[RMDB]
An RNA of 177 nucleotides, treated with 2A3 and DMS and read out base by base. 2A3 adducts were read by reverse transcription with SuperScript II with manganese. Source: RMDB library TTRDEL, as collected in RNAgym. The 2A3 profile rests on 24,082 reads.

RNA sequence: GGGAACGACUCGAGUAGAGUCGAAAAGAUAUGGAAUGUCCGUAGAGCGAUGAAAUCGGAAACGAUGGAGCUCGAAACGGAGCAUUCCUAAGUCAAACUGUGGUAAACGUUCGCGUUUACCACAGAAGAUAUAACGAAUCUUCGGAUUCGUUAUAUCAAAAGAAACAACAACAACAAC
Reactivity to 2A3 in 0.01 (KOAc 150mM, MgCl2 10mM, bicine 150mM(pH8.5), 24C), signal-to-noise 5, nucleotides 027 to 126: g010a020u060a040u120g000g000a020a010u010g010u010c000c010g010u040a070g010a000g030c020g180a300u050g030a050a040a010u020c010g010g020a090a020a010c000g000a010u020g010g030a010g000c010u010c000g000a020a010a000c010g000g000a090g130c010a000u010u000c000c000u010a110a020g040u010c050a080a060a100c010u000g000u010g010g010u010a010a000a010c010g020u040u050c300g020c000g120u010u010u000a000c000c010a010c000a010g000a000a010
Reactivity to DMS in 0.01 (KOAc 150mM, MgCl2 10mM, bicine 150mM(pH8.5), 24C), signal-to-noise 8, nucleotides 027 to 126: g010a040u000a300u010g010g000a020a000u000g010u000c000c000g020u000a240g000a030g010c000g000a090u010g010a080a100a000u000c010g000g000a110a090a160c000g010a010u000g000g000a100g020c010u000c000g010a040a080a050c010g000g010a050g000c010a000u000u000c000c000u000a020a110g010u000c040a110a100a200c000u000g000u000g000g000u000a000a000a010c000g010u000u010c230g020c010g010u000u000u000a000c000c000a000c000a000g000a030a080